[RMDB]
RNA sequence: GGGAACGACUCGAGUAGAGUCGAAAAGUUCAUUUUUUGCUUAAGGAGACCUUUACACUUGCUACACCUUUGGAAUUGGUUGUUCCAGUGUAGGUUUUGCCGUUUACUGUAAACUUGAUCUUCAAGCAGUACUGGAUCGCUUCGGCGAUCCAGUACUAAAAGAAACAACAACAACAAC
Reactivity to 2A3 in 0.01 (KOAc 150mM, MgCl2 10mM, bicine 150mM(pH8.5), 24C), signal-to-noise 2, nucleotides 027 to 126: g030u060u020c030a120u000u070u000u120u030u150g000c000u000u040a120a050g000g010a010g020a000c000c000u060u030u110a000c000a000c000u000u000g050c010u030a020c000a000c030c040u030u140u100g120g110a130a000u100u100g160g080u060u260g000u020u100c000c000a040g000u000g000u010a000g000g100u000u000u160u130g040c000c000g000u040u090u190a050c100u070g020u040a000a040a000c000u030u030g000a000u070c000u020u100c100a040a000g110c040

Chemical mapping of a 177-nucleotide RNA with 2A3. The RNA was probed in 150 mM KOAc, 10 mM MgCl2 and 150 mM bicine (pH 8.5) at 24 C. The 2A3 profile rests on 531 reads.